[RMDB]
Source information
This 177-nucleotide RNA was probed chemically with DMS. For DMS the reverse transcriptase was MarathonRT. The data come from the RNA Mapping Database (RMDB), library TTRINS.
RNA sequence: GGGAACGACUCGAGUAGAGUCGAAAAGAUAUGGAAUGUAGACUCGCGGUUGCCUAUAGGUAUCAAGUUCGGAAACGAACUUGCCGAGCCUAUAGGCAACCGAACUACGAGCUACAUUCCUAAGUCACAGCUUAAAUGACUUCGGUCAUUUAAGCUGAAAAGAAACAACAACAACAAC
Reactivity to DMS in 0.01 (KOAc 150mM, MgCl2 10mM, bicine 150mM(pH8.5), 24C), signal-to-noise 1, nucleotides 027 to 126: g030a070u000a300u020g010g010a040a000u000g000u010a020g000a160c010u000c000g000c050g000g030u000u000g010c000c000u000a000u000a000g000g010u000a060u020c000a010a020g000u000u000c000g000g000a150a110a240c000g000a000a000c000u000u000g010c300c190g000a130g010c000c000u000a020u000a010g010g000c000a040a000c010c010g000a000a000c110u000a300c010g010a010g000c010u010a000c000a030u000u000c000c000u010a020a020g000u010c050a300